[RMDB]
RNA sequence: GGGAACGACUCGAGUAGAGUCGAAAACCUUUAAAAGUUGCGUCACUAACCUUGAAGAAAGGGACAACUAUUGGUAGGCAGUUUGGGUGGGGCGCCACGCCUCUAAGAAGAAAACAGAGGUCUCCAAUUAUAAAUUUGCAUUCGUGCAAAUUUAUAAAAAAGAAACAACAACAACAAC
Reactivity to 2A3 in 0.01 (KOAc 150mM, MgCl2 10mM, bicine 150mM(pH8.5), 24C), signal-to-noise 3, nucleotides 027 to 126: c010c000u040u130u080a120a080a000a000g030u020u020g010c010g040u030c010a010c100u080a150a120c000c000u030u060g060a070a040g080a130a120a020g040g000g010a030c040a040a060c020u090a060u130u050g120g010u040a070g060g040c040a040g020u040u130u140g030g020g010u060g000g000g000g000c000g000c000c010a010c030g010c000c000u000c000u020a050a100g060a080a010g040a020a150a030a020c120a030g020a030g020g020u010c010u000c020c010a000a000
Reactivity to DMS in 0.01 (KOAc 150mM, MgCl2 10mM, bicine 150mM(pH8.5), 24C), signal-to-noise 5, nucleotides 027 to 126: c010c000u010u030u050a050a050a090a110g010u020u000g010c090g000u000c040a080c110u010a110a180c020c000u000u000g000a150a100g010a100a030a020g000g000g000a100c080a050a060c080u020a080u010u000g010g020u020a020g010g000c050a050g010u010u010u020g000g010g020u020g020g010g000g010c050g010c060c070a050c100g010c010c000u000c010u020a040a090g010a170a160g000a110a100a080a050c130a040g000a020g020g010u010c050u010c010c040a030a120